[RMDB]
RNA sequence: GGGAACGACUCGAGUAGAGUCGAAAAAAGUUUUAGUAGAUAGGGGUUUAUUAUAGGAUAUGGUUGGGAGGGCUCAAGAAAAAGACCAUAAUCUGAGCCUCUCAGAACUACUGAACUGUGGAGAAUUGGGCAAGUUGGGCACAUAUUGCUACCUCCACCUUGUAUUAGGAUUCGUCCUAAUACAAGGAAAAGAAACAACAACAACAAC
Reactivity to 2A3 in 0.01 (KOAc 150mM, MgCl2 10mM, bicine 150mM(pH8.5), 24C), signal-to-noise 2, nucleotides 027 to 156: a000a000g060u070u060u030u060a020g000u010a010g030a130u100a040g030g030g040g020u140u160u030a120u150u100a080u180a070g030g010a030u040a050u120g030g000u020u010g040g000g030a030g040g020g010c040u030c050a070a070g070a070a100a010a000a000g050a030c070c000a060u110a100a090u050c020u010g000a000g000c000c000u000c000u000c000a010g000a080a050c020u050a000c000u050g050a080a020c000u060g010u050g040g000a070g010a120a240u140u130g030g010g000c020a020a020g040u090u090g000g020g030c070a020c000a080u110a120u060u050g000c010u020a050c000c010u000c000c000a010
Reactivity to DMS in 0.01 (KOAc 150mM, MgCl2 10mM, bicine 150mM(pH8.5), 24C), signal-to-noise 2, nucleotides 027 to 156: a050a050g010u000u020u000u020a070g010u010a100g000a180u000a170g020g020g000g010u010u010u000a040u010u010a110u030a110g000g020a080u000a030u000g000g040u000u010g010g010g050a090g040g020g010c010u000c030a030a130g030a020a090a070a080a170g000a110c040c050a010u010a050a120u010c040u010g000a050g010c070c000u000c020u030c050a040g010a060a110c030u010a080c060u000g000a050a040c100u000g030u000g010g000a150g000a020a170u000u000g040g000g010c000a030a110g040u000u000g010g010g020c020a040c060a120u000a090u020u000g000c030u000a190c060c020u000c030c010a170
An RNA of 207 nucleotides, treated with 2A3 and DMS and read out base by base.
DMS adducts were read by reverse transcription with MarathonRT.
For 2A3, 1,285 sequencing reads were counted.
2A3 adducts were read by reverse transcription with SuperScript II with manganese.
For DMS, 2,739 sequencing reads were counted.
The RNA was probed in 150 mM KOAc, 10 mM MgCl2 and 150 mM bicine (pH 8.5) at 24 C.